[RMDB]
RNA sequence: GGGAACGACUCGAGUAGAGUCGAAAAGGCUGCGUAUCACUCUAGGGUACGUGAUAGUGCGAUAUAAGAAGCACUGGUACAUUCCGGCAGGGACAGUUAAGAGAUGGCCGCAGUCUCGUGUCCCUGCAAAAGGAGUUCUCGUUCGCGAGAACUCCAACAGUUUACGCAGGUUCGCCUGCGUAAACUGAAAAGAAACAACAACAACAAC
Reactivity to 2A3 in 0.01 (KOAc 150mM, MgCl2 10mM, bicine 150mM(pH8.5), 24C), signal-to-noise 1, nucleotides 027 to 156: g140g020c100u070g000c010g010u000a010u010c010a110c160u290c190u230a120g030g000g130u000a010c010g010u010g010a090u230a120g010u000g040c090g000a050u070a030u050a210a240g160a190a040g030c000a000c000u000g000g130u110a070c040a000u120u000c000c020g030g030c000a000g000g000g000a000c000a030g030u080u100a150a040g010a000g000a010u010g080g000c090c010g070c090a030g050u020c000u000c000g000u000g000u050c000c000c020u000g000c000a000a060a000a000g000g000a010g010u000u020c000u000c030g040u210u080c080g000c030g150a000g000a000a000c000u000c000c000a000a000